[RMDB]
An RNA of 207 nucleotides, treated with 2A3 and read out base by base. The data come from the RNA Mapping Database (RMDB), library ARCHII. Reactivities are given for positions 27 through 156. The reactions ran in a buffer of 150 mM KOAc, 10 mM MgCl2 and 150 mM bicine (pH 8.5), at 24 C. 2A3 adducts were read by reverse transcription with SuperScript II with manganese. For 2A3, 495 sequencing reads were counted.

RNA sequence: GGGAACGACUCGAGUAGAGUCGAAAACGCGACUCAUCGGCAGAUGUAAAAUGCCAGUUAAAUAUAACUGCAAAAAAUACAAAUUCUUACGCAUUAGCUGCCUAAAAAACAGCCUGCGUGAUCUUCACAAGAUUGUUUGCGUUUUGCUAGAAGGUCUUCGUAGCACAACGUUCGCGUUGUGCUACGAAAAAGAAACAACAACAACAAC
Reactivity to 2A3 in 0.01 (KOAc 150mM, MgCl2 10mM, bicine 150mM(pH8.5), 24C), signal-to-noise 1, nucleotides 027 to 156: c010g020c020g110a060c020u000c020a020u000c000g030g060c040a020g000a050u070g020u300a030a040a040a040u050g020c040c010a000g020u020u020a040a300a130u300a120u090a140a010c010u000g020c050a000a000a010a000a130a040u200a160c110a050a180a050u110u010c020u040u030a000c000g010c000a040u180u100a020g000c000u020g000c010c020u000a000a000a000a000a000a000c000a000g010c000c000u000g010c010g030u030g000a000u000c000u020u010c020a020c000a030a090g000a140u130u070g110u210u140u140g070c020g000u020u020u010u090g010c010u010a020g010a030a000g020g020u020c000u000